Chemical mapping of a 207-nucleotide RNA with 2A3 and DMS.
The DMS profile rests on 1,373 reads.
The data come from the RNA Mapping Database (RMDB), library OK3TST.
For 2A3 the reverse transcriptase was SuperScript II with manganese.
[RMDB]
RNA sequence: GGGAACGACUCGAGUAGAGUCGAAAAGGAGAUGGAAAUACCAUUAGACGGGAUGACAUUGAUAAAAUCCCAACUAAUGCUCUUGAGAUUAAGAAGACUUUCAAGCCUCCAAAGGUGUCACAGUCAGCUUACAUUUGGAUUCCACGCUCUCAAAGGGCAUCCUCAAUUCCUUCGGGAAUUGAGGAUGAAAAGAAACAACAACAACAAC
Reactivity to 2A3 in 0.01 (KOAc 150mM, MgCl2 10mM, bicine 150mM(pH8.5), 24C), signal-to-noise 2, nucleotides 027 to 156: g020g000a010g000a040u010g020g030a010a040a060u150a100c000c030a010u000u000a030g010a010c040g000g010g000a030u040g020a020c060a190u080u300g050a070u300a040a100a010a020u000c000c000c000a020a060c010u020a000a000u030g020c010u000c000u130u090g080a070g010a100u030u040a030a000g030a080a010g020a040c010u000u010u080c100a030a030g000c000c000u070c090c110a130a120a000g020g000u050g050u110c030a020c020a100g010u020c000a030g040c000u000u030a010c020a130u060u110u180g050g010a020u020u030c010c020a040c120g020c010u000c000u020c040a030a080a050g000g020g000
Reactivity to DMS in 0.01 (KOAc 150mM, MgCl2 10mM, bicine 150mM(pH8.5), 24C), signal-to-noise 1, nucleotides 027 to 156: g000g010a190g010a160u000g030g000a060a110a220u000a180c050c000a080u000u010a060g000a060c250g010g000g030a110u000g020a140c090a120u030u020g060a250u020a070a070a110a020u000c010c000c000a040a210c020u000a050a040u000g000c000u010c060u010u020g000a010g000a110u000u010a110a170g000a030a000g030a030c000u000u000u000c090a120a190g000c000c000u000c030c100a150a050a220g010g040u010g050u000c040a020c100a050g000u000c020a100g030c060u000u000a040c110a080u000u000u010g000g020a220u000u000c020c000a000c120g050c010u000c050u010c020a040a050a100g020g000g000

Overview
DMS adducts were read by reverse transcription with MarathonRT. For 2A3, 1,154 sequencing reads were counted.